Source: RMDB library OK2TST, as collected in RNAgym. This 177-nucleotide RNA was probed chemically with 2A3 and DMS. The 2A3 profile rests on 1,246 reads. Reactivities are given for positions 27 through 126. As a SHAPE reagent, 2A3 marks flexible, mostly unpaired nucleotides at the ribose 2'-OH.

[RMDB]
RNA sequence: GGGAACGACUCGAGUAGAGUCGAAAAAAAAAAGGGGCAUCAAAAGUGCAAAUGCCCUUCACCCUUCUCCUCUUUGAUGAGUUCAUUCAAUGUGCACAGUAGAUUGUAAGGGUUGUCUAUACGGCACGCCUUGCAUACAAUUCGUUGUAUGCAAGGCAAAAGAAACAACAACAACAAC
Reactivity to 2A3 in 0.01 (KOAc 150mM, MgCl2 10mM, bicine 150mM(pH8.5), 24C), signal-to-noise 2, nucleotides 027 to 126: a000a000a000a000a000a000g060g010g000g010c010a040u040c030a050a120a270a060g070u110g090c010a000a080a070u000g010c010c000c000u030u030c010a040c000c000c000u020u010c000u000c020c000u060c040u140u130u100g070a140u080g030a070g130u080u040c010a050u110u090c060a050a080u130g030u040g000c020a010c010a090g040u020a020g000a050u050u090g100u160a020a030g000g060g000u040u050g010u000c010u020a080u070a150c140g040g010c000a000c000
Reactivity to DMS in 0.01 (KOAc 150mM, MgCl2 10mM, bicine 150mM(pH8.5), 24C), signal-to-noise 3, nucleotides 027 to 126: a000a050a040a070a040a030g000g000g010g000c020a010u010c120a060a080a080a170g000u000g000c110a070a080a040u000g010c010c000c000u000u000c060a060c010c020c000u000u010c080u000c020c030u000c060u000u000u000g010a090u020g010a110g000u010u000c090a070u000u000c130a050a060u000g020u000g000c020a040c040a120g010u010a070g000a050u010u000g020u010a100a060g010g010g000u000u000g000u010c050u000a060u010a100c180g010g000c050a030c080